[RMDB]
RNA sequence: GGGAACGACUCGAGUAGAGUCGAAAAGUGAGCUUUCGAGCUCACAAAAAACCGUAGGCACUCUACCCACCGUCGACUAAGCGAUGAAAUUCGAAAGAGUGGAGCUUAGUACCGACGAGGAGUGCCUAAACGGAAAAAAUAUAGCUUCGGCUAUAAAGCGAUGCUAUGAAUUCGUUCAUAGCAUCGCAAAAGAAACAACAACAACAAC
Reactivity to 2A3 in 0.01 (KOAc 150mM, MgCl2 10mM, bicine 150mM(pH8.5), 24C), signal-to-noise 1, nucleotides 027 to 156: g000u010g000a000g000c010u000u030u220c160g020a000g030c000u010c000a000c000a020a020a000a000a000a000c010c020g060u010a030g000g010c000a010c010u030c010u040a300c040c020c000a010c000c010g020u010c000g070a070c000u000a000a000g010c000g200a240u010g030a100a000a000u010u000c040g080a080a040a040g010a030g000u020g000g040a010g000c000u000u000a000g010u010a120c010c040g000a000c000g010a010g010g000a000g000u000g000c010c010u000a000a000a000c000g040g120a000a060a020a010a010a080u170a000u110a070g000c020u090u070c300g080g000c000u030a000u140a060a270a040
Description: Structure probing data (2A3) for a 207-nucleotide construct. The 2A3 profile rests on 890 reads. 2A3 adducts were read by reverse transcription with SuperScript II with manganese. The data come from the RNA Mapping Database (RMDB), library RNAMAK. Values cover nucleotides 27 to 156. Conditions: 150 mM KOAc, 10 mM MgCl2 and 150 mM bicine (pH 8.5), 24 C.